[RMDB]
RNA sequence: GGGAACGACUCGAGUAGAGUCGAAAAGAAUAUAAGAGCGCAGUAACUGUGAGAGCAAACUGCGCCCGGACUGUAGGAUCCGGUGGCACAGCAACGCUCACUCACAACACGCUGUGCCACGUGAAGACAUUAGCGGAUGCUUCGGCAUCCGCUAAUGAAAAGAAACAACAACAACAAC
Reactivity to 2A3 in 0.01 (KOAc 150mM, MgCl2 10mM, bicine 150mM(pH8.5), 24C), signal-to-noise 4, nucleotides 027 to 126: g020a050a020u220a000u030a110a040g040a020g010c000g000c000a000g000u060a140a080c020u070g010u050g040a050g000a010g090c030a090a060a000c010u000g010c000g000c000c000c000g000g010a010c010u140g110u290a060g080g110a080u000c000c000g020g000u020g000g040c000a000c000a000g000c010a070a120c070g040c010u030c030a050c020u100c040a100c030a030a160c070a020c160g000c000u000g010u000g000c010c000a000c020g090u130g060a040a020g070a030
Reactivity to DMS in 0.01 (KOAc 150mM, MgCl2 10mM, bicine 150mM(pH8.5), 24C), signal-to-noise 3, nucleotides 027 to 126: g000a080a070u050a070u040a070a060g010a090g030c000g010c000a030g000u000a120a110c170u020g000u000g000a060g000a140g020c020a110a060a040c010u000g000c020g020c000c020c010g000g000a080c080u000g010u050a060g000g000a230u020c010c000g040g000u000g000g000c010a000c030a000g000c040a130a140c160g000c110u000c060a100c080u010c220a170c240a140a070c180a130c120g000c000u000g020u000g000c050c000a000c000g010u060g010a040a170g010a220
An RNA of 177 nucleotides, treated with 2A3 and DMS and read out base by base. For 2A3 the reverse transcriptase was SuperScript II with manganese. The reactions ran in a buffer of 150 mM KOAc, 10 mM MgCl2 and 150 mM bicine (pH 8.5), at 24 C. Reactivities are given for positions 27 through 126. DMS adducts were read by reverse transcription with MarathonRT. The DMS profile rests on 3,661 reads.